Background
An RNA of 177 nucleotides, treated with 2A3 and DMS and read out base by base. For 2A3, 9,304 sequencing reads were counted. Reactivities are given for positions 27 through 126.

[RMDB]
RNA sequence: GGGAACGACUCGAGUAGAGUCGAAAAUAAUGCCGGCUGGGCGGAGCAAAGGCGGCACCGCAGUCCGUUGGGGGCUCGCCACGUGUGACUGCUGCGUUCGAGCCUCUGGUCCGUGCGGCUAAGGUGCGCAUGGGUCCGGCUUCGGCCGGAUCCAUGUAAAAGAAACAACAACAACAAC
Reactivity to 2A3 in 0.01 (KOAc 150mM, MgCl2 10mM, bicine 150mM(pH8.5), 24C), signal-to-noise 4, nucleotides 027 to 126: u210a020a070u160g000c000c000g010g000c000u020g040g110g010c000g020g000a020g060c000a030a010a020g010g000c000g000g010c010a000c000c040g000c010a000g000u000c000c020g020u030u060g000g010g000g030g050c040u020c030g080c020c000a010c000g060u110g060u100g010a020c020u030g010c010u020g000c010g020u010u110c060g040a040g000c010c000u000c010u010g050g070u000c000c000g000u030g070c000g000g000c000u010a060a040g010g010u050g020c030
Reactivity to DMS in 0.01 (KOAc 150mM, MgCl2 10mM, bicine 150mM(pH8.5), 24C), signal-to-noise 2, nucleotides 027 to 126: u020a060a100u030g020c020c010g000g020c020u010g000g000g000c010g000g010a050g000c030a030a080a050g010g020c000g020g000c050a020c040c130g010c040a030g000u000c010c010g020u030u020g000g000g000g000g010c030u000c050g000c030c030a010c030g020u020g000u040g000a030c020u000g000c000u030g000c050g020u020u030c070g000a160g010c000c010u000c030u000g000g010u000c030c010g010u020g000c020g000g040c010u000a010a070g010g020u010g000c180